Chemical mapping of a 177-nucleotide RNA with DMS and 2A3. The DMS profile rests on 3,226 reads. The RNA was probed in 150 mM KOAc, 10 mM MgCl2 and 150 mM bicine (pH 8.5) at 24 C. The data come from the RNA Mapping Database (RMDB), library TTRDES.

[RMDB]
RNA sequence: GGGAACGACUCGAGUAGAGUCGAAAAGAUAUGGAUCCUAGACUCCGAUAAGCGUGUAUCGGAAACGAUAUACACGCUUUUGACGGAGCUAGGAUCCUAAGUCAAAACGCGGGCUUCGGCCCGCGAAGAAUACCAACUGGUUCGCCAGUUGGUAUUCAAAAGAAACAACAACAACAAC
Reactivity to DMS in 0.01 (KOAc 150mM, MgCl2 10mM, bicine 150mM(pH8.5), 24C), signal-to-noise 3, nucleotides 027 to 126: g000a010u000a280u030g000g020a030u000c000c000u000a010g000a280c010u000c000c000g050a130u010a010a030g020c010g020u010g020u000a010u010c010g010g000a080a030a100c000g000a040u010a070u010a100c020a000c000g010c000u000u000u000u000g000a210c100g010g000a010g000c010u000a010g010g000a000u000c000c000u010a000a050g000u000c030a090a070a130a210c030g020c000g020g000g010c000u010u020c230g020g010c000c010c000g020c030g010a010a030
Reactivity to 2A3 in 0.01 (KOAc 150mM, MgCl2 10mM, bicine 150mM(pH8.5), 24C), signal-to-noise 2, nucleotides 027 to 126: g000a000u040a020u070g020g000a000u000c000c010u020a130g140a300c000u030c020c050g250a300u130a280a000g000c010g000u010g000u010a010u030c010g020g080a030a030a010c030g010a010u050a000u020a160c020a000c010g000c000u020u030u010u060g120a060c020g000g010a000g000c000u000a010g000g000a000u000c000c000u000a010a000g010u000c010a000a000a050a130c010g020c020g020g020g000c040u110u070c260g190g000c120c010c000g010c000g010a000a000